[RMDB]
An RNA of 177 nucleotides, treated with 2A3 and DMS and read out base by base.
RNA sequence: GGGAACGACUCGAGUAGAGUCGAAAACGGCUGCGAAGGCAAGGGCGUUCACGCGGUUGAGCUUGCGGUCAGGUGCCUCAAGAACGAGCCGCUCGAUAGCGUCGACAAUAUCUGGCCGCGCUGAAUGCGCUGAGCGUAUCUUCGGAUACGCUCAGCGAAAAGAAACAACAACAACAAC
Reactivity to 2A3 in 0.01 (KOAc 150mM, MgCl2 10mM, bicine 150mM(pH8.5), 24C), signal-to-noise 4, nucleotides 027 to 126: c020g040g010c040u030g030c050g080a210a010g060g050c050a030a040g020g000g000c040g020u010u090c040a020c060g010c030g030g030u000u080g040a030g010c020u160u160g000c100g010g030u030c070a090g000g090u110g080c000c030u120c060a060a040g040a090a040c060g010a050g080c070c020g010c000u030c030g110a080u150a150g040c010g000u010c030g020a000c060a050a110u100a040u150c040u020g040g000c000c040g010c020g000c050u040g050a100a050u120g060
Reactivity to DMS in 0.01 (KOAc 150mM, MgCl2 10mM, bicine 150mM(pH8.5), 24C), signal-to-noise 2, nucleotides 027 to 126: c000g000g030c000u050g000c000g060a040a130g000g010c090a130a090g000g040g010c010g030u010u000c040a080c080g000c060g000g030u000u000g000a070g000c030u020u030g020c070g000g060u000c010a050g000g000u060g050c010c070u050c040a100a140g000a100a110c120g000a070g020c090c010g000c020u020c300g000a200u030a120g030c030g020u010c000g000a120c150a130a100u000a000u010c030u000g000g000c000c030g010c020g000c030u030g000a130a050u040g010
Values cover nucleotides 27 to 126.